[RMDB]
RNA sequence: GGGAACGACUCGAGUAGAGUCGAAAACAAGGCACCCUAAAUUCUAUAGAAAUAAAACCUCAGAUGAGUCUCCUUCUUAGAGUGUUACAAUGAAUGGGAGUUUACAACUUUUAUGUGUCAUGUUUCCAACAGCUGUGUUUGGGGUGGUCACUGGCAAUAAAAUAGUCCUAUUCGUAGGACUAUUUUAAAAAGAAACAACAACAACAAC
Reactivity to 2A3 in 0.01 (KOAc 150mM, MgCl2 10mM, bicine 150mM(pH8.5), 24C), signal-to-noise 2, nucleotides 027 to 156: c020a040a080g040g000c020a050c010c020c000u040a100a110a050u130u050c050u090a090u090a270g070a090a180a050u080a050a100a040a040c050c010u030c030a060g000a090u060g040a080g110u050c030u010c030c010u080u060c020u050u080a010g020a040g090u090g010u020u070a050c090a050a110u120g040a050a030u000g060g000g010a020g000u040u060u090a080c040a070a040c000u140u020u090u100a090u270g070u000g020u030c040a050u040g060u020u040u000c040c000a060a060c020a020g060c070u060g020u010g010u120u040u080g020g000g000g000u030g010g050u020c010a010c040u010g080g020c010a000a080
Reactivity to DMS in 0.01 (KOAc 150mM, MgCl2 10mM, bicine 150mM(pH8.5), 24C), signal-to-noise 2, nucleotides 027 to 156: c050a120a140g010g010c030a050c000c000c030u010a050a080a160u000u010c040u010a180u010a150g000a130a100a120u010a050a100a050a080c020c000u000c020a070g020a140u000g010a100g010u000c030u000c030c020u000u000c060u000u010a080g020a120g020u000g020u000u000a090c080a090a120u010g000a060a090u000g010g020g010a090g020u010u000u000a070c050a060a080c060u000u000u000u020a100u010g010u000g000u000c030a160u010g010u000u000u010c020c030a090a120c080a080g010c040u000g020u000g000u000u000u000g040g030g020g000u000g010g030u010c030a070c040u000g020g010c050a040a180